[RMDB]
RNA sequence: GGGAACGACUCGAGUAGAGUCGAAAAGACGCUGAUGCGAUCGACUGUAAGAUAGAUAGACUGAGCAGACAGAUACGUACGGCAAGUAUCGUCGCCAGAAUUACAGUCGCAAAUUGCCGUACGAAGAAUCCGGGUACGCAUUCGUGCGUACCCGGAUAAAAGAAACAACAACAACAAC
Reactivity to 2A3 in 0.01 (KOAc 150mM, MgCl2 10mM, bicine 150mM(pH8.5), 24C), signal-to-noise 2, nucleotides 027 to 126: g160a000c000g000c070u130g050a080u250g020c020g060a110u010c000g000a010c000u000g020u040a000a000g040a160u220a040g200a060u170a090g150a240c000u030g000a050g000c080a080g120a110c000a030g000a000u010a070c000g000u000a000c000g000g040c000a000a010g030u020a010u050c010g010u000c000g000c000c000a020g020a000a000u030u000a020c050a000g000u000c000g000c050a060a070a000u010u000g000c000c000g000u000a050c160g000a000a070g090a000